Chemical mapping of a 207-nucleotide RNA with DMS and 2A3. High 2A3 reactivity points to a flexible backbone, as in loops and unpaired stretches. The DMS profile rests on 3,168 reads. In probing experiments dimethyl sulfate is read out at A N1 and C N3, which are open when not base-paired. Conditions: 150 mM KOAc, 10 mM MgCl2 and 150 mM bicine (pH 8.5), 24 C. It was measured as part of the RMDB library M2RFPK.

[RMDB]
RNA sequence: GGGAACGACUCGAGUAGAGUCGAAAACAGAUAAGAAAAGACCGAGAGGUUCAAGCUUAUAGGGCUGAAAGCGGGGGACAGCAGUACUAAACAUUCCCUGUGGCUGAGACGAAGGUAGUACUCCAACAAAACGAGUACUAGUUCGCUAGUACUCGAAGGUAUCAUACAGGUUCGCCUGUAUGAUACCAAAAGAAACAACAACAACAAC
Reactivity to DMS in 0.01 (KOAc 150mM, MgCl2 10mM, bicine 150mM(pH8.5), 24C), signal-to-noise 2, nucleotides 027 to 156: c030a250g010a190u000a070a120g020a120a100a190a120g000a060c000c000g020a270g020a190g020g010u010u000c030a060a130g000c030u000u000a090u000a080g030g020g000c000u000g010a040a070a060g020c060g050g010g010g030g000a090c080a060g030c060a040g000u000a170c040u010a070a090a090c010a200u000u000c020c010c040u020g010u000g010g030c030u000g010a190g000a070c070g000a060a070g010g040u000a040g020u000a020c030u000c060c050a070a190c140a030a040a080a110c030g020a030g000u000a000c010u010a010g010u000u010c280g010c000u000a000g010u000a010c020u000c000g000a010a040
Reactivity to 2A3 in 0.01 (KOAc 150mM, MgCl2 10mM, bicine 150mM(pH8.5), 24C), signal-to-noise 3, nucleotides 027 to 156: c030a020g100a080u160a160a020g060a040a110a040a010g040a020c010c060g010a020g000a020g110g020u090u100c070a070a010g010c000u090u010a030u130a220g060g000g040c040u040g060a080a070a000g040c060g010g010g000g020g020a010c020a020g020c010a000g020u060a030c030u080a000a100a010c010a080u060u070c010c020c000u060g030u030g040g010c020u010g020a010g010a070c060g040a040a000g020g010u010a010g010u010a060c010u000c060c020a050a050c020a050a160a000a020c000g000a000g000u000a000c000u000a000g010u000u040c090g000c110u000a000g000u000a000c000u000c000g000a010a000